This 177-nucleotide RNA was probed chemically with 2A3. Reactivities are rounded to 0.1 and cut off at 0 and 3. It was measured as part of the RMDB library RFM100. The reactions ran in a buffer of 150 mM KOAc, 10 mM MgCl2 and 150 mM bicine (pH 8.5), at 24 C.
[RMDB]
RNA sequence: GGGAACGACUCGAGUAGAGUCGAAAAAUCCGUUUUAGGAUAAACUUAUCUACAGAAGUGUCUGUUACUGUUUUGGAAGAGUAAUACUGUUCGCUUAUCCAUAUUUCCCCGUUCUGGGGAAGCCUCAGUCGAGUGGGAAAUUCGUUUCCCACUCGACAAAAGAAACAACAACAACAAC
Reactivity to 2A3 in 0.01 (KOAc 150mM, MgCl2 10mM, bicine 150mM(pH8.5), 24C), signal-to-noise 2, nucleotides 027 to 126: a010u040c020c000g000u180u070u050u220a050g000g030a020u050a000a000a000c050u050u060a080u160c030u140a000c020a000g020a090a090g130u000g010u060c000u030g010u010u020a000c000u020g170u100u100u050u300g100g050a000a080g010a020g030u140a070a060u040a270c030u010g030u100u000c000g000c000u040u030a030u100c000c000a100u050a060u060u020u030c010c000c000c000g050u300u080c030u300g010g020g020g010a000a000g090c100c110u170c000a030